This 177-nucleotide RNA was probed chemically with DMS and 2A3. DMS adducts were read by reverse transcription with MarathonRT. The reactions ran in a buffer of 150 mM KOAc, 10 mM MgCl2 and 150 mM bicine (pH 8.5), at 24 C.
RNA sequence: GGGAACGACUCGAGUAGAGUCGAAAACCUGUAACGUUCGCGUUACAGGAAAAUAAAAAUCUCCAGCCAGGAGAAGGCGAAAAAUUGAUCGAAAACGAUCUAAAAGUCUACAGUUCGCUGUAGACAAGUCUUUAUAGAUGUUCGCAUCUAUAAAGACAAAAGAAACAACAACAACAAC
Reactivity to DMS in 0.01 (KOAc 150mM, MgCl2 10mM, bicine 150mM(pH8.5), 24C), signal-to-noise 3, nucleotides 027 to 126: c000c000u020g010u000a010a010c000g030u000u010c190g040c000g030u000u000a010c000a020g000g000a010a010a070a050u030a010a050a080a120a100u000c010u000c000c040a150g020c060c080a100g010g020a080g000a080a090g000g010c060g000a060a040a060a080a120u000u000g000a020u010c000g000a070a070a110a170c070g010a000u000c000u010a060a070a090a120g000u000c000u010a000c000a020g010u000u010c240g020c010u010g010u000a010g000a010c000a040a030
Reactivity to 2A3 in 0.01 (KOAc 150mM, MgCl2 10mM, bicine 150mM(pH8.5), 24C), signal-to-noise 5, nucleotides 027 to 126: c000c000u000g010u000a010a000c010g010u020u070c270g020c000g090u010u010a000c000a000g010g020a060a110a020a010u080a010a070a000a010a020u020c020u000c010c020a090g060c020c020a030g030g050a090g080a070a070g050g020c040g120a050a050a000a050a120u110u120g000a000u000c000g030a090a060a090a300c030g000a000u000c000u040a040a030a030a090g010u000c000u000a000c000a010g010u010u050c120g040c090u010g000u000a000g000a000c000a000a010